[RMDB]
RNA sequence: GGGAACGACUCGAGUAGAGUCGAAAAGAUAUGGAUAUAUGUGGCCAGCGAGGAUCUCGGAAACGAGGGAGCUGGCAUGAUAUCCUAAGUCAAAACUUCCUCCCUACGUUCGCGUAGGGAGGAAGAAGAAGUUGAAAUUGUUCGCAAUUUCAACUUCAAAAGAAACAACAACAACAAC
Reactivity to 2A3 in 0.01 (KOAc 150mM, MgCl2 10mM, bicine 150mM(pH8.5), 24C), signal-to-noise 3, nucleotides 027 to 126: g020a020u110a080u190g010g000a000u010a010u030a060u140g150u110g270g300c020c000a000g000c000g040a290g050g000a010u000c010u020c010g020g040a150a110a080c020g000a000g000g010g010a000g000c000u000g000g000c000a000u010g000a000u000a010u020c000c020u010a160a010g080u020c050a040a000a110a160c000u000u020c010c000u000c000c000c000u000a000c000g010u050u080c300g000c020g150u000a010g010g000g000a000g030g000a000a000g000a000a000
Reactivity to DMS in 0.01 (KOAc 150mM, MgCl2 10mM, bicine 150mM(pH8.5), 24C), signal-to-noise 2, nucleotides 027 to 126: g000a040u010a300u010g000g010a000u000a000u010a080u020g040u010g010g020c010c000a020g000c000g010a080g020g000a010u020c000u000c010g000g000a140a100a190c000g010a030g000g000g010a070g010c020u000g010g010c000a000u000g010a020u000a000u010c000c000u000a040a150g000u000c030a050a070a130a180c010u000u000c000c000u010c000c000c000u000a000c000g010u000u000c300g000c020g030u000a000g000g000g000a000g000g010a000a000g020a020a060
The record gives the reactivity of an RNA of 177 nucleotides to 2A3 and DMS. For 2A3 the reverse transcriptase was SuperScript II with manganese. The reactions ran in a buffer of 150 mM KOAc, 10 mM MgCl2 and 150 mM bicine (pH 8.5), at 24 C. High DMS reactivity at an A or C suggests that its Watson-Crick edge is free. The DMS profile rests on 2,471 reads.